[RMDB]
RNA sequence: GGGAACGACUCGAGUAGAGUCGAAAAGGACAGCUCUGCAAUAGCUUUUAAUUGUGCAUUGAAGGAAUAUGAAUAUUCAGGAAAGCUAUUGAAAGUUUCGGCUACACCACCAGGAAGAGAAUGUGAAUAUUUCCUAGUUAUUCGUAACUAGGAAAUAAAAAGAAACAACAACAACAAC
Reactivity to 2A3 in 0.01 (KOAc 150mM, MgCl2 10mM, bicine 150mM(pH8.5), 24C), signal-to-noise 3, nucleotides 027 to 126: g020g030a040c020a020g010c010u030c020u110g000c020a020a010u010a020g010c010u070u050u040u090a150a160u190u170g080u060g060c060a070u040u120g090a140a070g140g030a060a040u090a020u140g130a150a060u090a070u200u060c010a010g000g130a030a010a010g000c000u000a010u030u010g040a080a050a030g020u030u050u100c040g030g000c000u020a010c010a020c010c000a030c000c010a010g070g050a060a030g070a020g060a100a070u150g030u060g110a090a020
Reactivity to DMS in 0.01 (KOAc 150mM, MgCl2 10mM, bicine 150mM(pH8.5), 24C), signal-to-noise 8, nucleotides 027 to 126: g010g020a100c090a070g000c030u000c050u000g020c020a030a010u000a010g010c000u000u000u000u000a050a150u000u010g020u000g020c110a100u010u000g010a150a170g020g010a070a050u000a060u010g010a120a110u010a050u000u000c040a090g010g000a020a010a020g010c000u000a010u000u000g000a050a080a070g010u000u000u000c080g000g000c030u000a080c080a090c030c020a080c040c030a070g000g000a060a070g010a090g000a070a060u010g010u010g010a100a170